Structure probing data (DMS and 2A3) for a 177-nucleotide construct. In probing experiments dimethyl sulfate is read out at A N1 and C N3, which are open when not base-paired. For DMS the reverse transcriptase was MarathonRT. The RNA was probed in 150 mM KOAc, 10 mM MgCl2 and 150 mM bicine (pH 8.5) at 24 C.
[RMDB]
RNA sequence: GGGAACGACUCGAGUAGAGUCGAAAACAGGAAAUGUAGACAGACUUAUGUGGCCUAUGACGAGCAACGCGGCGCCGCUCAGAAGCGUUUUUUCUGCACCAAGGAGAUGGUCGCCCACCCAGCCGCCGAUACUUCCAGUGUUCGCACUGGAAGUAUCAAAAGAAACAACAACAACAAC
Reactivity to DMS in 0.01 (KOAc 150mM, MgCl2 10mM, bicine 150mM(pH8.5), 24C), signal-to-noise 2, nucleotides 027 to 126: c020a100g010g030a050a050a060u000g010u000a030g020a090c100a030g000a090c090u000u000a090u010g060u010g020g010c040c070u010a100u010g000a070c080g000a090g000c040a050a050c180g030c040g030g010c020g010c100c090g010c090u000c080a030g000a100a160g020c070g010u000u010u020u000u020u000c050u000g010c080a070c100c050a050a080g000g000a090g010a040u000g010g010u000c060g020c020c000c020a110c020c030c030a110g010c050c020g000c080c160
Reactivity to 2A3 in 0.01 (KOAc 150mM, MgCl2 10mM, bicine 150mM(pH8.5), 24C), signal-to-noise 2, nucleotides 027 to 126: c040a020g120g050a040a090a050u160g030u090a020g040a080c090a040g030a050c020u110u140a100u290g100u100g080g000c000c000u050a070u120g070a040c020g020a010g100c040a080a070c020g000c000g030g000c020g030c000c010g000c020u030c010a040g040a120a020g030c040g080u080u000u020u020u040u100c060u070g020c010a020c030c010a080a040g090g030a050g030a060u070g040g000u050c050g020c010c030c030a030c010c010c000a000g030c020c010g000c040c020